[RMDB]
This 170-nucleotide RNA was probed chemically with DMS and 2A3. The reactions ran in a buffer of 150 mM KOAc, 10 mM MgCl2 and 150 mM bicine (pH 8.5), at 24 C. DMS (dimethyl sulfate) methylates the pairing face of unpaired adenines and cytosines. For DMS, 64,472 sequencing reads were counted.

RNA sequence: GGGAACGACUCGAGUAGAGUCGAAAAGGGACGAAGCCCCCUCCGGGCGCUCCCCUCGGAUCUCCGCCGGGUGGGUUCACAUCCCCAACCCGCGGGCCGGCUGUUCUUCUUUUCCUUUGCUCGUCUUGUAGUAAGUAGUUCGCUACUUACAAAAGAAACAACAACAACAAC
Reactivity to DMS in 0.01 (KOAc 150mM, MgCl2 10mM, bicine 150mM(pH8.5), 24C), signal-to-noise 9, nucleotides 027 to 129: g020g000g020a070c090g000a100a060g000c050c000c040c070c070u000c080c050g000g000g000c030g020c040u020c020c030c020c090u030c030g030g010a150u040c090u000c050c000g040c050c070g000g020g070u030g020g010g020u030u050c200a110c220a110u090c160c010c010c040a060a040c000c000c000g000c050g030g020g000c060c030g000g010c090u010g010u040u020c060u040u040c020u000u030u000u030c000c000u000u000u000g000c030u000c070g020u000c030u000u030g020u060a190
Reactivity to 2A3 in 0.01 (KOAc 150mM, MgCl2 10mM, bicine 150mM(pH8.5), 24C), signal-to-noise 9, nucleotides 027 to 129: g020g000g010a010c040g100a070a020g010c010c000c000c010c020u040c040c020g010g010g010c060g030c040u050c000c000c000c000u000c010g030g010a050u040c070u020c070c010g080c070c030g010g000g000u040g020g000g000u140u170c160a100c020a140u180c010c000c000c000a060a170c000c000c000g010c000g010g010g000c030c010g020g010c020u060g050u080u030c000u110u080c000u020u010u010u020c000c000u030u040u050g010c020u030c020g080u050c050u050u100g040u030a130